[RMDB]
RNA sequence: GGGAACGACUCGAGUAGAGUCGAAAAGUUGCCCGAGAAGAGAUCACACAGAUGAGACACAAGGAGCGAUGUCUCAUCACUUGGUUUUCGACAAGUGACGAGUCGUUCCCUAAAUCGCUCCAAUGAAAUAAGCCUUGUGAUUCGUCACAAGGCUUAUAAAAGAAACAACAACAACAAC
Reactivity to DMS in 0.01 (KOAc 150mM, MgCl2 10mM, bicine 150mM(pH8.5), 24C), signal-to-noise 2, nucleotides 027 to 126: g030u010u020g070c300c000c010g000a100g000a080a100g010a150g000a120u010c090a070c230a090c160a120g000a030u000g010a010g010a020c000a050c090a020a040g020g010a000g030c010g030a040u000g020u000c000u000c010a000u000c010a100c060u010u000g000g010u030u000u000u000c000g040a010c010a050a090g040u000g000a080c000g010a020g000u000c000g000u000u000c000c000c000u020a000a050a010u000c010g010c020u000c000c010a120a040u030g010a100a130